[RMDB]
RNA sequence: GGGAACGACUCGAGUAGAGUCGAAAAAGCGAGUGAACACUCCUAGAAAAUAGGAGUGAAACCGAUCGUAAACACUCGCAAGUAGUUAAACAAAGCAUAGCAUAGCUAUGCAGAUCGGUACUACAAAACCAGCCAUCGAUUUCGAUCGAUGGCUGGUAAAAGAAACAACAACAACAAC
Reactivity to 2A3 in 0.01 (KOAc 150mM, MgCl2 10mM, bicine 150mM(pH8.5), 24C), signal-to-noise 1, nucleotides 027 to 126: a000g000c020g000a020g000u000g070a090a000c000a000c000u000c000c000u000a040g060a070a300a020a000u070a030g000g000a050g000u040g000a040a000a000c000c000g000a000u000c000g030u010a050a030a050c000a000c000u000c000g020c000a050a040g010u050a000g000u000u300a060a050a150c110a090a180a000g000c000a000u000a000g000c040a220u110a180g000c000u010a000u000g030c000a000g010a000u020c000g000g050u000a040c000u060a070c000a000a130a000

This 177-nucleotide RNA was probed chemically with 2A3. Values cover nucleotides 27 to 126. Source: RMDB library OK1LIB, as collected in RNAgym. The RNA was probed in 150 mM KOAc, 10 mM MgCl2 and 150 mM bicine (pH 8.5) at 24 C.